An RNA of 207 nucleotides, treated with DMS and 2A3 and read out base by base.
The data come from the RNA Mapping Database (RMDB), library RNAMAK.
RNA sequence: GGGAACGACUCGAGUAGAGUCGAAAAGGGGUCGAGUUUGUCAGGGUAGAAGAAGCGAAGAACAUACACUGAAGCCUCCACGGUGUAUGGGAGCUUCGGAUACCCUUGGAUUUAACUCGACGGAGGCACCCAAAAGAGCCAUGUUCGCAUGGCUCAAGAUAUCACCUGAGUUCGCUCAGGUGAUAUCAAAAGAAACAACAACAACAAC
Reactivity to DMS in 0.01 (KOAc 150mM, MgCl2 10mM, bicine 150mM(pH8.5), 24C), signal-to-noise 1, nucleotides 027 to 156: g050g020g040g000u000c010g010a000g040u000u000u000g000u000c030a070g020g000g000u000a040g020a300a300g000a010a010g050c000g000a090a190g060a100a190c000a010u000a010c000a010c010u010g000a060a050g050c000c000u000c010c040a300c030g010g000u000g000u000a030u000g000g000g000a120g000c010u010u000c000g020g040a300u000a010c000c000c020u050u060g010g020a090u010u000u010a010a010c000u010c000g010a040c000g060g020a010g070g030c040a130c010c080c000a100a090a060a270g000a010g030c000c000a030u000g010u010u000c300g030c000a010u000g000g020c000u020c000a010a150
Reactivity to 2A3 in 0.01 (KOAc 150mM, MgCl2 10mM, bicine 150mM(pH8.5), 24C), signal-to-noise 3, nucleotides 027 to 156: g070g010g020g010u020c010g000a000g010u040u060u050g130u110c210a150g010g000g000u010a010g000a050a000g000a010a010g000c020g160a230a010g000a000a000c000a000u010a000c000a000c000u030g050a190a040g020c010c000u010c000c000a000c010g000g010u000g000u000a000u000g000g000g000a010g000c000u010u010c000g010g000a000u010a000c000c000c000u000u030g000g000a000u000u020u260a000a010c010u000c000g000a000c010g000g000a000g000g000c000a030c000c000c010a040a160a040a050g020a000g000c000c000a010u020g050u050u110c300g020c110a000u000g000g000c000u000c000a000a010
2A3 adducts were read by reverse transcription with SuperScript II with manganese.